[RMDB]
RNA sequence: GGGAACGACUCGAGUAGAGUCGAAAACCUAUCGCCGAUGUGCUCUUCAUUGCUGCUACCGGUGUCGGCGCAGCGGUCGGACACGUGGAUGCAGGGGAAGCCAGCGCCGAUUUCUCCGACAACGCAACGCUUAUCGACGUCUCCCGCGCACGUUCGACACGUCGAUAAAUUUCGAUUUAUCGACGUGAAAAGAAACAACAACAACAAC
Reactivity to 2A3 in 0.01 (KOAc 150mM, MgCl2 10mM, bicine 150mM(pH8.5), 24C), signal-to-noise 5, nucleotides 027 to 156: c010c000u020a080u100c050g000c020c020g040a060u080g070u150g050c030u020c070u170u080c100a220u160u180g070c020u030g020c020u090a080c040c010g070g040u090g090u090c010g000g000c010g010c040a050g070c060g090g020u030c030g050g010a020c010a010c100g090u110g070g030a100u070g050c070a070g000g000g030g040a000a050g030c010c020a040g000c010g020c030c000g040a020u050u070u030c070u000c020c030g070a050c040a130a040c090g020c040a060a040c030g020c060u120u110a060u120c030g030a030c030g080u020c010u000c040c020c000g030c000g010c010a050c030g020u060u030c010g010a020
Reactivity to DMS in 0.01 (KOAc 150mM, MgCl2 10mM, bicine 150mM(pH8.5), 24C), signal-to-noise 2, nucleotides 027 to 156: c020c010u000a130u000c040g040c030c030g040a100u010g040u000g000c020u050c000u030u000c060a110u010u000g010c000u000g030c030u000a120c040c030g040g050u010g020u000c090g040g000c120g010c030a160g020c060g030g030u000c030g020g000a090c060a060c060g040u010g000g020a290u000g030c000a180g000g040g050g010a070a090g000c050c050a120g000c040g020c010c050g000a120u000u000u000c020u000c020c020g010a170c070a020a080c060g000c020a080a050c010g020c020u000u000a140u000c000g050a060c020g000u000c020u000c030c020c030g030c070g020c000a110c020g050u000u010c040g010a240

About this RNA: Chemical mapping of a 207-nucleotide RNA with 2A3 and DMS. For 2A3 the reverse transcriptase was SuperScript II with manganese. Values cover nucleotides 27 to 156. The 2A3 profile rests on 3,347 reads.